The data come from the RNA Mapping Database (RMDB), library RNAMAK. The record gives the reactivity of an RNA of 207 nucleotides to 2A3 and DMS. For 2A3, 3,209 sequencing reads were counted. 2A3 adducts were read by reverse transcription with SuperScript II with manganese.
[RMDB]
RNA sequence: GGGAACGACUCGAGUAGAGUCGAAAAGCGUACUACAAGCGGAACCAAGCAUCGAUCUAUACGGAUGCUAUCCCAAAUAGGAUAGCUGAUGUAUAGGGAGCUUGCUAACGCUUGUAUCGCAAACCCUGUGGACAAGUCUUCGGACUUGUCCACAGGGCGAAUUGCUAAACUUCGGUUUAGCAAUUCGAAAAGAAACAACAACAACAAC
Reactivity to 2A3 in 0.01 (KOAc 150mM, MgCl2 10mM, bicine 150mM(pH8.5), 24C), signal-to-noise 3, nucleotides 027 to 156: g010c000g050u120a080c070u000a020c040a000a000g000c000g020g000a010a010c020c000a010a000g010c030a240u300c030g100a040u020c020u000a000u000a000c010g000g020a000u020g000c000u000a000u030c000c010c020a220a300a220u300a120g000g000a000u000a000g000c000u010g010a010u060g010u000a000u000a000g000g000g000a010g000c000u010u000g030c010u120a280a010c010g000c010u000u010g000u000a010u020c010g000c000a000a020a060c000c010c000u000g000u000g000g000a000c000a000a010g000u000c000u060u170c300g060g000a000c000u010u000g000u000c010c010a000c000a000g000g000g030
Reactivity to DMS in 0.01 (KOAc 150mM, MgCl2 10mM, bicine 150mM(pH8.5), 24C), signal-to-noise 1, nucleotides 027 to 156: g010c010g020u040a070c070u000a040c010a000a050g010c000g030g020a200a270c280c040a020a060g000c050a200u000c100g000a180u000c000u010a030u010a010c000g000g000a300u000g010c000u000a050u000c000c000c010a050a150a300u030a010g010g000a040u000a000g010c000u000g000a300u010g000u000a020u000a010g000g000g000a130g000c010u000u030g040c010u010a090a280c000g030c010u000u000g000u010a010u010c000g000c010a170a100a120c010c000c000u000g080u000g000g000a060c000a020a030g000u010c030u000u000c300g030g020a010c000u000u010g010u000c010c000a000c000a020g000g000g010